[RMDB]
RNA sequence: GGGAACGACUCGAGUAGAGUCGAAAACGGCGGCCACGUACGAGCUCGCGGCCGCGGACAGGGUCUGCACGAACCGGUCAUGAAACGUCGCCACUUGGGCGCUGACGGUCUGAUAUUCCUGGGCGUGAAACCGCGCUGUAUUCGUACAGCGCGGUUUAAAAGAAACAACAACAACAAC
Reactivity to 2A3 in 0.01 (KOAc 150mM, MgCl2 10mM, bicine 150mM(pH8.5), 24C), signal-to-noise 2, nucleotides 027 to 126: c000g100g040c010g000g050c050c020a060c020g030u090a040c110g050a020g090c040u030c000g040c030g040g000c000c000g000c030g010g030a000c000a040g000g080g070u040c040u060g010c060a000c130g010a040a020c000c000g050g100u080c010a050u110g010a030a210a020c090g160u260c000g060c030c020a060c160u220u260g180g000g000c060g000c000u000g030a000c030g010g040u060c010u060g020a000u010a060u080u040c020c020u020g000g000g000c000g020u300g010
Reactivity to DMS in 0.01 (KOAc 150mM, MgCl2 10mM, bicine 150mM(pH8.5), 24C), signal-to-noise 2, nucleotides 027 to 126: c050g000g010c000g030g060c040c040a020c040g040u070a130c020g040a120g060c120u010c000g020c060g000g000c000c000g020c000g010g000a040c080a050g010g010g020u000c040u040g040c040a060c130g000a040a070c000c020g050g030u000c020a060u040g050a040a090a190c090g020u000c010g020c010c000a140c240u030u040g010g020g010c000g040c090u000g000a070c060g000g000u000c020u090g010a000u010a140u010u000c000c000u010g000g000g030c020g000u010g000
Annotation:
The data come from the RNA Mapping Database (RMDB), library OK1LIB. The record gives the reactivity of an RNA of 177 nucleotides to 2A3 and DMS. For DMS the reverse transcriptase was MarathonRT. For DMS, 1,977 sequencing reads were counted. For 2A3 the reverse transcriptase was SuperScript II with manganese. Values cover nucleotides 27 to 126.